[RMDB]
RNA sequence: GGGAACGACUCGAGUAGAGUCGAAAAUAAUAGUAACCCUACUCUCAAUAGGAGGCCUGCCUCCACUAUCAGGAUUUAUGCCAAAAUGAAUAAUUAUUCAAGAAAUAACAAAAAAUGAAAGCAUCAUCAUGCCAACACUCAUAGCAAUAACAGCACUCCAUACUAUGUACUUCGGUACAUAGUAUGGAAAAGAAACAACAACAACAAC
Reactivity to 2A3 in 0.01 (KOAc 150mM, MgCl2 10mM, bicine 150mM(pH8.5), 24C), signal-to-noise 3, nucleotides 027 to 156: u040a020a020u050a050g050u060a060a080c010c020c000u000a070c040u010c000u000c120a090a180u070a140g020g000a020g020g010c050c080u090g060c000c020u010c060c030a040c030u110a130u070c040a010g020g030a010u000u080u090a090u210g010c010c010a040a070a090a130u070g040a030a030u100a210a040u150u130a070u050u070c030a030a040g050a100a140a040u130a090a040c060a020a110a020a060a000a000u100g050a070a060a000g030c020a000u000c000a020u020c020a030u070g000c010c020a040a010c040a020c080u050c060a060u090a060g020c050a050a090u050a090a040c010a050g010c010a050c080u000
Chemical mapping of a 207-nucleotide RNA with 2A3.
Conditions: 150 mM KOAc, 10 mM MgCl2 and 150 mM bicine (pH 8.5), 24 C.
Source: RMDB library PDB130, as collected in RNAgym.
2A3 adducts were read by reverse transcription with SuperScript II with manganese.